[RMDB]
RNA sequence: GGGAACGACUCGAGUAGAGUCGAAAACCCGUUUCGUCUUGUACGAAUCACUCUUGAACGAACUUAAAAUUGCAUCAUACGUCACGGUAGGUUUCGUCUUGCUGUGCGUACGUUGCACACCAAUUAUUAGAAUUAUCUAGUUCGCUAGAUAAUUCUAAAAAGAAACAACAACAACAAC
Reactivity to DMS in 0.01 (KOAc 150mM, MgCl2 10mM, bicine 150mM(pH8.5), 24C), signal-to-noise 4, nucleotides 027 to 126: c000c010c010g020u000u000u000c020g020u000c020u010u000g020u010a020c010g000a050a040u000c060a120c150u010c070u000u010g020a120a090c100g000a060a110c160u010u020a030a060a110a110u010u000g020c010a010u000c000a050u000a010c010g000u010c010a010c010g010g000u000a020g020g000u000u000u010c200g000u010c010u000u000g000c010u000g010u000g000c000g010u000a000c070g000u000u010g010c000a040c280a080c110c060a040a050u000u000a110u000
Reactivity to 2A3 in 0.01 (KOAc 150mM, MgCl2 10mM, bicine 150mM(pH8.5), 24C), signal-to-noise 9, nucleotides 027 to 126: c000c000c000g010u020u020u010c010g010u010c040u100u230g050u140a010c020g020a040a040u060c030a070c070u100c040u070u120g110a150a030c070g030a060a040c050u160u190a090a080a150a200u170u070g000c000a000u000c010a010u010a020c020g060u060c240a000c010g010g000u010a000g020g020u070u300u230c150g100u060c030u000u000g000c010u000g000u000g010c000g000u000a010c010g000u000u000g000c010a010c000a010c010c040a110a180u140u060a090u090